About this RNA
The record gives the reactivity of an RNA of 207 nucleotides to DMS and 2A3. For 2A3 the reverse transcriptase was SuperScript II with manganese. The RNA was probed in 150 mM KOAc, 10 mM MgCl2 and 150 mM bicine (pH 8.5) at 24 C.
RNA sequence: GGGAACGACUCGAGUAGAGUCGAAAACCUGGUUUAGGGUUCCAGGCUAGCCCUAUCUAUCGGUCGAGAUGCGAGCGCUUAAGCUCAAAUAGAGUGGCUGAGUUAGUGGUGAACGUAUCCCUAUGUUAAAACGGUAGCUGCUUCGGCAGCUACCGAAUCUCCUAAUAACCUUCGGGUUAUUAGGAGAAAAAGAAACAACAACAACAAC
Reactivity to DMS in 0.01 (KOAc 150mM, MgCl2 10mM, bicine 150mM(pH8.5), 24C), signal-to-noise 1, nucleotides 027 to 156: c000c010u010g020g010u000u020u000a110g010g020g020u000u000c000c020a080g020g030c000u010a300g000c020c000c020u010a020u000c040u000a060u010c000g030g010u000c010g000a190g000a040u030g010c300g000a030g060c030g030c300u000u000a140a240g020c010u000c010a080a210a080u000a180g000a170g020u010g030g040c040u030g010a060g040u000u010a050g000u000g070g040u010g000a000a070c080g000u000a100u000c030c010c040u000a200u000g010u000u000a090a110a120a170c030g040g030u000a020g040c000u010g040c030u000u000c300g030g030c060a010g010c000u000a000c000c010g030a000a020
Reactivity to 2A3 in 0.01 (KOAc 150mM, MgCl2 10mM, bicine 150mM(pH8.5), 24C), signal-to-noise 2, nucleotides 027 to 156: c000c000u000g000g030u040u110u150a050g000g000g010u070u090c000c020a020g000g040c010u030a000g000c000c000c000u000a030u020c020u050a090u070c000g000g070u070c090g050a060g010a300u060g040c010g040a000g030c020g030c130u220u300a200a130g000c000u030c000a000a020a000u070a020g120a020g070u110g010g000c010u000g010a010g010u010u010a020g000u100g250g020u040g000a000a020c040g060u070a100u110c000c000c010u030a050u010g070u070u120a060a070a060a050c010g010g000u000a000g000c020u010g000c020u020u060c150g050g010c040a000g020c000u000a000c000c000g000a000a000